[RMDB]
RNA sequence: GGGAACGACUCGAGUAGAGUCGAAAAAUAAACCAUACAGGAAGUCAGCUCGUAUUGUUGGGGACGUUUUAGGUAAGUACCAUCCUCAUGGAGAUACUGCUGUUUAUUAUGCUAUGGUAAGAAUGGCACAAGAUUUUUCAACUAGAGCACUUUUAGAAAUUUAUCAGUCAUUCGUGACUGAUAAAUUAAAAGAAACAACAACAACAAC
Reactivity to 2A3 in 0.01 (KOAc 150mM, MgCl2 10mM, bicine 150mM(pH8.5), 24C), signal-to-noise 2, nucleotides 027 to 156: a000u060a010a080a020c010c000a000u040a020c030a010g130g090a120a020g070u090c010a000g010c010u040c100g030u050a000u080u080g060u100u100g010g000g000g040a020c060g050u050u070u170u180a060g030g010u030a120a080g020u020a090c020c000a030u000c000c020u010c020a020u130g090g030a120g010a040u030a010c010u050g010c010u000g060u050u090u050a120u100u050a020u050g050c080u010a000u020g000g040u010a030a000g030a050a020u080g040g000c030a020c020a120a030g020a110u130u050u020u160u160c060a100a070c030u090a060g010a030g090c000a010c020u060u070u050u100a070g070a010
Reactivity to DMS in 0.01 (KOAc 150mM, MgCl2 10mM, bicine 150mM(pH8.5), 24C), signal-to-noise 2, nucleotides 027 to 156: a100u010a100a070a200c020c020a120u000a060c080a110g010g040a020a100g010u010c020a070g040c000u000c120g000u010a060u010u030g020u000u020g000g020g000g000a040c070g040u000u000u000u000a060g000g020u000a040a110g020u010a050c030c010a120u000c000c000u000c060a090u000g070g010a210g000a080u000a050c020u000g000c020u020g010u000u000u010a080u010u000a060u010g010c060u000a060u000g050g010u010a030a090g010a090a070u000g000g010c020a070c050a050a080g010a150u000u030u010u010u000c030a080a090c100u000a050g010a060g030c020a060c030u000u010u010u000a150g000a110

The record gives the reactivity of an RNA of 207 nucleotides to 2A3 and DMS. Conditions: 150 mM KOAc, 10 mM MgCl2 and 150 mM bicine (pH 8.5), 24 C. For 2A3 the reverse transcriptase was SuperScript II with manganese. DMS adducts were read by reverse transcription with MarathonRT.